[RMDB]
RNA sequence: GGGAACGACUCGAGUAGAGUCGAAAAGAUAUGGAGUGGUAAGGGAGAAUGGUAUUCGGAAACGAAUGAGAGUUCGACGAUCUUACGUAACAUCUCCUAAGUCAAAACGUUCUGUUCGCAGAACGAAGUAUCGUAUCGACUUCGGUCGAUACGAUACAAAAGAAACAACAACAACAAC
Reactivity to DMS in 0.01 (KOAc 150mM, MgCl2 10mM, bicine 150mM(pH8.5), 24C), signal-to-noise 2, nucleotides 027 to 126: g000a030u000a040u010g000g010a020g020u020g020g030u000a030a040g000g000g040a030g010a030a020u000g000g000u020a000u000u000c030g030g010a020a010a050c000g050a030a020u000g010a090g000a130g020u000u000c040g010a080c190g010a030u010c010u010u000a010c010g000u010a050a200c290a070u010c010u000c000c000u000a000a050g000u000c010a040a050a070a170c010g000u000u000c000u000g030u000u000c210g030c000a000g000a030a000c010g000a020a080
Reactivity to 2A3 in 0.01 (KOAc 150mM, MgCl2 10mM, bicine 150mM(pH8.5), 24C), signal-to-noise 2, nucleotides 027 to 126: g000a010u010a020u040g010g000a000g010u170g000g000u040a000a000g000g000g020a020g040a020a010u090g050g060u190a020u010u020c000g020g000a010a020a000c000g000a000a010u050g010a130g000a030g150u010u000c050g060a210c010g020a190u010c000u000u020a010c040g080u100a150a050c050a180u070c010u050c000c000u000a000a000g000u000c040a040a020a010a120c020g000u020u000c020u030g120u060u060c300g020c070a010g000a000a000c010g020a150a020